[RMDB]
RNA sequence: GGGAACGACUCGAGUAGAGUCGAAAACAACACGUCCUCGUCGUACAGAGUGGUAACAUGUGUCACCACAUAUCCAAGCUUGGGUACACGGGCUUGACCCAACCCCUUGGCCGGAUGGUGGCACAUGAAAAGAAGUAACACUUCGGUGUUACUUCAAGACAAAGUUACUCUUCGGAGUAACUUUGUCAAAAGAAACAACAACAACAAC
Reactivity to 2A3 in 0.01 (KOAc 150mM, MgCl2 10mM, bicine 150mM(pH8.5), 24C), signal-to-noise 4, nucleotides 027 to 156: c060a010a030c020a030c080g110u080c020c010u030c040g160u040c020g060u150a090c110a100g050a060g040u120g040g070u170a100a010c000a000u000g000u000g000u010c000a010c020c020a050c040a070u210a030u050c000c000a050a000g030c090u130u110g010g010g000u070a060c060a060c120g030g010g000c040u260u300g150a300c000c000c000a000a030c040c000c000c000u070u090g040g000c030c030g080g020a110u010g000g000u000g000g000c000a000c000a000u000g000a000a010a000a010g000a000a000g000u000a000a000c000a000c000u010u050c240g070g000u000g000u000u000a000c000u000u000c000a010a010
Reactivity to DMS in 0.01 (KOAc 150mM, MgCl2 10mM, bicine 150mM(pH8.5), 24C), signal-to-noise 2, nucleotides 027 to 156: c040a060a120c080a170c040g020u010c050c000u000c030g020u000c040g020u000a130c090a150g000a160g000u010g020g000u010a080a190c000a030u000g050u000g000u000c000a000c000c000a000c060a120u000a230u000c020c010a000a050g000c110u000u000g020g010g060u000a030c210a080c060g010g030g010c010u000u000g030a090c000c000c020a140a030c060c030c010c020u000u000g020g000c080c030g040g000a070u000g020g030u000g000g050c040a030c000a000u010g000a020a050a150a160g030a020a030g000u000a000a030c010a010c010u000u010c300g030g030u000g000u000u000a010c020u000u000c000a060a160